Chemical mapping of a 177-nucleotide RNA with 2A3 and DMS. Reactivities are given for positions 27 through 126. The RNA was probed in 150 mM KOAc, 10 mM MgCl2 and 150 mM bicine (pH 8.5) at 24 C. Source: RMDB libraries RFM100 and RFMREP, as collected in RNAgym. 2A3 adducts were read by reverse transcription with SuperScript II with manganese. DMS (dimethyl sulfate) methylates the pairing face of unpaired adenines and cytosines.

RNA sequence: GGGAACGACUCGAGUAGAGUCGAAAAAACUGGAGUGAUGAAAAAGUAUCCUUAGGCGUGGUUGUGGCCGUCUUGGCCACCUUUGUGCCACUUGCCAGUGCUAGGACUUGUCAUAGUUACACUGACUCGUGCAUCACAUGUUCGCAUGUGAUGCACGAAAAGAAACAACAACAACAAC
Reactivity to 2A3 in 0.01 (KOAc 150mM, MgCl2 10mM, bicine 150mM(pH8.5), 24C), signal-to-noise 1, nucleotides 027 to 126: a010a000c140u090g020g010a090g000u020g050a060u030g140a050a010a030a020a020g000u010a180u040c020c020u040u070a070g000g000c020g000u000g000g070u070u070g000u040g000g000c000c110g120u150c160u210u230g000g000c000c000a000c000c010u080u160u120g090u170g020c000c000a010c000u000u120g000c000c040a000g000u030g000c030u070a000g030g050a050c040u110u040g020u000c010a040u000a140g050u090u100a040c010a090c080u060g040a090c040u000
Reactivity to DMS in 0.01 (KOAc 150mM, MgCl2 10mM, bicine 150mM(pH8.5), 24C), signal-to-noise 1, nucleotides 027 to 126: a030a080c040u000g000g020a180g030u020g010a040u000g000a030a020a090a000a060g000u000a120u000c000c020u010u000a090g010g000c000g000u010g000g020u000u010g000u000g060g070c010c030g010u000c240u100u070g010g020c000c000a000c000c090u000u000u000g010u010g000c010c000a020c010u010u010g000c000c000a020g000u010g020c160u000a030g000g000a020c010u000u000g090u000c040a060u010a080g000u000u010a290c110a090c020u000g000a220c030u000